[RMDB]
An RNA of 177 nucleotides, treated with DMS and read out base by base. It was measured as part of the RMDB library OK2TRN. For DMS the reverse transcriptase was MarathonRT.
RNA sequence: GGGAACGACUCGAGUAGAGUCGAAAAGAGCGAUUUAAUAUUAGAUCGUCGCGAUCUAAACAGUCCGACACGCUGUCGCGGGGCAGCACCUCCCGGGAAAGGGCCCUUGGUCCGAAUUCGAAAGAAACAUUACCUCCUCCUUCGGGAGGAGGUAAUGAAAAGAAACAACAACAACAAC
Reactivity to DMS in 0.01 (KOAc 150mM, MgCl2 10mM, bicine 150mM(pH8.5), 24C), signal-to-noise 1, nucleotides 027 to 126: g010a130g080c040g010a080u000u000u000a040a150u010a090u000u000a060g010a070u000c010g030u000c230g000c100g000a010u020c010u000a030a100a270c050a150g000u000c010c000g000a200c050a090c130g010c020u000g010u000c040g000c110g000g030g010g000c010a040g000c000a200c080c060u000c000c070c040g000g000g040a000a110a100g000g000g000c000c020c170u010u000g030g030u000c000c060g010a020a230u020u000c020g000a130a070a070g000a060a060a140